RNA sequence: GGGAACGACUCGAGUAGAGUCGAAAAUCUUGAUUUCAACCUAUCAUAGGACGUUUCUAUAAGAUGCGUGUUUCUUGAGAAUUUAACAUUUACAACCUUUUUAAGUCCUUUUAUUAACACGGUGUUAUAAUAGUUUCCAGUUCGCUGGAAACUAUUAAAAAGAAACAACAACAACAAC
Reactivity to DMS in 0.01 (KOAc 150mM, MgCl2 10mM, bicine 150mM(pH8.5), 24C), signal-to-noise 2, nucleotides 027 to 126: u030c110u010u010g010a110u000u000u000c040a050a050c040c030u010a020u000c060a140u010a080g000g020a100c090g010u010u000u000c010u000a050u010a080a060g000a030u000g010c030g030u000g000u000u000u010c050u000u010g000a040g000a040a020u000u010u000a010a050c140a010u010u010u010a140c180a120a160c090c090u000u000u010u000u000a020a040g000u010c010c000u000u000u010u000a040u000u000a040a020c020a040c010g000g020u010g000u000u000a060
Reactivity to 2A3 in 0.01 (KOAc 150mM, MgCl2 10mM, bicine 150mM(pH8.5), 24C), signal-to-noise 1, nucleotides 027 to 126: u020c000u010u250g020a080u050u000u210c050a090a060c020c000u060a070u160c050a130u020a020g100g010a110c000g000u020u000u000c020u020a070u020a260a070g010a110u090g240c000g000u050g000u100u020u000c040u000u040g040a040g040a020a000u020u080u080a090a000c000a020u220u060u140a240c220a180a240c060c040u150u260u000u090u140a090a000g020u000c000c000u060u210u090u300a220u130u110a050a000c020a020c040g000g130u110g000u130u000a080